[RMDB]
RNA sequence: GGGAACGACUCGAGUAGAGUCGAAAAACGGAUCUACGUGCCGCCAUGCGUCCCCGCGCUGAUCUGGAACGUGAAUUCAUGGUCACAGAUGCGAAUGUGGUCGCCGUCGUUCAGCGUGACCGCGGAGCGGAGAACCAUAAUUCGUUAUGGUUCUCCGAAAAGAAACAACAACAACAAC
Reactivity to DMS in 0.01 (KOAc 150mM, MgCl2 10mM, bicine 150mM(pH8.5), 24C), signal-to-noise 9, nucleotides 027 to 126: a120c070g000g000a060u010c050u000a060c060g020u000g010c030c020g010c040c060a070u010g010c080g010u000c020c020c020c050g010c020g010c020u000g010a030u000c030u010g020g010a070a050c040g010u010g000a120a110u010u010c130a100u010g000g000u000c010a040c020a050g000a110u010g010c150g010a070a090u000g020u000g000g010u000c030g010c030c030g010u000c050g000u000u000c030a060g010c040g010u000g000a060c080c070g020c060g010g000a140g010
Reactivity to 2A3 in 0.01 (KOAc 150mM, MgCl2 10mM, bicine 150mM(pH8.5), 24C), signal-to-noise 9, nucleotides 027 to 126: a000c030g020g010a070u050c040u180a040c040g060u100g040c010c010g000c020c020a100u160g020c020g040u030c010c000c000c010g000c000g000c010u030g020a040u000c040u110g070g060a100a030c030g070u140g120a070a100u250u150c060a080u220g020g000u030c020a010c010a070g100a090u260g090c070g080a110a070u090g020u030g030g030u020c020g010c050c010g020u040c010g010u030u050c010a010g010c010g030u010g020a020c030c000g000c020g020g020a040g060